[RMDB]
RNA sequence: GGGAACGACUCGAGUAGAGUCGAAAAGAUAUGGAAAUACUACCCACCGCAAAAGUCCUCGAAGAACUACAUAGCGUCGGAAACGACGCUAUGUAGGGAGAGGUCGCUGCGAGGUAUUUCCUAAGUCGUAUAAUAAAUCCUUCGGGAUUUAUUAUACAAAAGAAACAACAACAACAAC
Reactivity to DMS in 0.01 (KOAc 150mM, MgCl2 10mM, bicine 150mM(pH8.5), 24C), signal-to-noise 2, nucleotides 027 to 126: g010a150u000a100u010g010g000a020a030a010u000a030c000u000a100c060c010c010a300c170c010g000c020a010a150a270a150g010u000c000c010u000c010g010a090a160g030a120a170c000u000a030c000a000u010a010g030c010g000u000c000g000g020a080a030a300c000g000a010c020g010c000u010a000u000g010u000a000g010g000g010a050g000a000g000g010u010c020g000c300u010g000c010g020a100g040g010u000a000u000u000u010c000c000u010a080a140g010u030c200
Reactivity to 2A3 in 0.01 (KOAc 150mM, MgCl2 10mM, bicine 150mM(pH8.5), 24C), signal-to-noise 1, nucleotides 027 to 126: g070a090u300a240u300g030g000a030a050a000u000a010c020u200a270c000c030c060a000c020c030g000c000a070a160a040a270g010u010c020c010u020c030g300a300a040g000a100a010c000u020a000c000a000u030a000g000c000g080u000c010g020g060a080a120a090c000g010a020c010g000c000u000a000u000g000u040a000g020g000g020a020g000a020g000g000u000c050g000c120u080g010c000g020a000g010g000u000a010u000u020u020c000c000u020a090a030g300u300c150
About this RNA
Chemical mapping of a 177-nucleotide RNA with DMS and 2A3. For 2A3 the reverse transcriptase was SuperScript II with manganese. Reactivities are given for positions 27 through 126. The reactions ran in a buffer of 150 mM KOAc, 10 mM MgCl2 and 150 mM bicine (pH 8.5), at 24 C.